[RMDB]
RNA sequence: GGGAACGACUCGAGUAGAGUCGAAAAGGACAGCACCCUCCCCGCGGAAGCCCGGGGACGAGGACGGCGACGGAGACUCGUUUGGACCCCGAGCCAAAGCGAGGCCCUGCGAGCCUGCUUUGAGCGGCAGUUGAUCAGUGUUCGCACUGAUCAACUGAAAAGAAACAACAACAACAAC
Reactivity to 2A3 in 0.01 (KOAc 150mM, MgCl2 10mM, bicine 150mM(pH8.5), 24C), signal-to-noise 1, nucleotides 027 to 126: g030g010a040c030a020g010c030a140c000c020c000u020c020c000c000c000g020c050g120g000a100a060g000c040c000c020g030g020g000g030a000c050g010a070g000g020a030c060g040g010c060g030a020c070g170g030a080g010a080c020u010c040g040u040u070u210g120g060a150c000c020c030c010g030a010g000c020c010a020a000a000g020c080g060a010g010g010c020c000c040u090g040c040g040a040g010c010c010u010g000c020u060u010u130g080a110g010c000g030g000
Reactivity to DMS in 0.01 (KOAc 150mM, MgCl2 10mM, bicine 150mM(pH8.5), 24C), signal-to-noise 2, nucleotides 027 to 126: g000g010a120c050a100g000c070a190c020c020c040u000c010c000c000c020g040c130g010g010a200a170g040c020c050c010g020g000g050g000a060c060g000a050g010g000a070c060g000g000c130g000a140c110g000g030a100g000a140c040u000c020g010u000u010u000g020g020a140c020c000c040c010g000a060g000c000c010a000a090a040g000c000g020a030g040g000c010c010c030u000g020c170g000a170g010c000c010u010g010c010u020u010u000g000a080g020c020g000g000